The record gives the reactivity of an RNA of 177 nucleotides to DMS and 2A3. For DMS the reverse transcriptase was MarathonRT. For DMS, 3,347 sequencing reads were counted. For 2A3, 8,025 sequencing reads were counted. The reactions ran in a buffer of 150 mM KOAc, 10 mM MgCl2 and 150 mM bicine (pH 8.5), at 24 C.

RNA sequence: GGGAACGACUCGAGUAGAGUCGAAAAGAUAUGGAAUUCCUACCCACCUCCCACAGGAGGUCGGAAACGACUCCCCACCCUGUGAAGGAGAGGGAAUUCCUAAGUCAAACGCUGGUUCGCCAGCGAACCAGUAAAUUUCGUUCGCGAAAUUUACUGGAAAAGAAACAACAACAACAAC
Reactivity to DMS in 0.01 (KOAc 150mM, MgCl2 10mM, bicine 150mM(pH8.5), 24C), signal-to-noise 5, nucleotides 027 to 126: g000a090u020a290u000g010g000a040a010u000u000c000c000u000a160c040c030c050a300c070c010u000c000c000c040a030c050a020g010g000a060g000g010u000c020g000g000a060a100a170c020g000a020c010u000c030c010c010c030a300c040c010c000u010g010u000g000a120a130g020g000a020g000a140g010g020g000a010a020u000u000c000c000u000a030a050g000u010c110a080a120a170c040g000c010u000g010g000u000u000c240g000c000c000a010g000c000g000a020a090
Reactivity to 2A3 in 0.01 (KOAc 150mM, MgCl2 10mM, bicine 150mM(pH8.5), 24C), signal-to-noise 4, nucleotides 027 to 126: g040a070u250a260u300g000g000a010a000u020u020c010c010u110a300c030c020c000a030c000c000u000c000c000c000a000c000a000g000g020a010g000g000u000c010g010g040a030a090a030c020g020a010c010u060c040c010c000c000a020c000c000c000u000g000u000g090a230a080g010g000a010g000a000g000g000g010a000a010u000u000c010c000u010a090a030g120u120c110a180a080a100c030g000c000u000g040g050u080u110c300g050c150c010a000g000c010g010a010a040